[RMDB]
Notes: Structure probing data (DMS and 2A3) for a 177-nucleotide construct. Conditions: 150 mM KOAc, 10 mM MgCl2 and 150 mM bicine (pH 8.5), 24 C. Values cover nucleotides 27 to 126.
RNA sequence: GGGAACGACUCGAGUAGAGUCGAAAACUGCGCGCGUGGCAGGUGGGUUGGUGAUGGUCCGGAUUUCGCAUAUUUAGAGAUGAGUUUUGCUGGGUUAGGGUGGUCGUGGAUAGCGGGGUCGCGCGUGCUAUAUAUAAAUUUUCGAAUUUAUAUAUAGAAAAGAAACAACAACAACAAC
Reactivity to DMS in 0.01 (KOAc 150mM, MgCl2 10mM, bicine 150mM(pH8.5), 24C), signal-to-noise 3, nucleotides 027 to 126: c050u010g020c010g030c010g020c030g040u000g020g000c040a070g020g000u030g000g000g020u020u030g010g000u030g020a140u030g000g020u020c110c040g000g000a070u020u020u010c040g000c030a040u000a070u050u010u040a130g010a160g000a060u000g010a040g000u010u020u010u010g020c070u000g000g000g000u010u030a090g000g010g000u020g000g000u020c080g020u010g000g010a090u010a090g010c080g000g000g010g000u000c000g000c010g000c010g010u000g000
Reactivity to 2A3 in 0.01 (KOAc 150mM, MgCl2 10mM, bicine 150mM(pH8.5), 24C), signal-to-noise 1, nucleotides 027 to 126: c000u040g000c000g000c000g000c010g070u020g050g030c000a020g040g050u120g000g060g000u070u180g020g000u040g050a050u110g060g060u070c050c030g000g040a040u000u090u040c050g000c050a030u090a080u270u250u060a120g020a000g000a150u120g010a030g140u050u070u140u100g020c010u070g000g050g030u090u140a040g030g010g020u140g000g000u060c020g000u020g000g040a060u020a050g000c030g020g030g000g010u010c000g000c000g020c000g000u020g000